Conditions: 150 mM KOAc, 10 mM MgCl2 and 150 mM bicine (pH 8.5), 24 C.
Chemical mapping of a 177-nucleotide RNA with DMS.
It was measured as part of the RMDB library OK2TRN.
RNA sequence: GGGAACGACUCGAGUAGAGUCGAAAAGAUUUACGGCGGGAAAGGUCCCGGGUGCGCGCGGAUGUCCCGGGUGCGGCACCGACCGAAAGGCGCCGAAACGGCACCGACCGAAACCGCCGGAAAGAAACACGUACUGCCUAUUCGUAGGCAGUACGUGAAAAGAAACAACAACAACAAC
Reactivity to DMS in 0.01 (KOAc 150mM, MgCl2 10mM, bicine 150mM(pH8.5), 24C), signal-to-noise 1, nucleotides 027 to 126: g010a120u010u000u000a160c010g000g000c000g000g040g030a060a160a300g010g000u010c060c080c110g040g000g000u000g010c000g000c040g000c000g030g030a220u000g010u010c000c000c040g000g000g010u000g000c010g020g010c000a120c060c000g000a110c110c060g010a040a130a100g010g030c040g020c000c000g010a030a070a100c140g010g000c010a040c000c040g000a050c000c010g040a060a110a120c000c000g010c000c010g010g000a010a030a050g000a120a100a200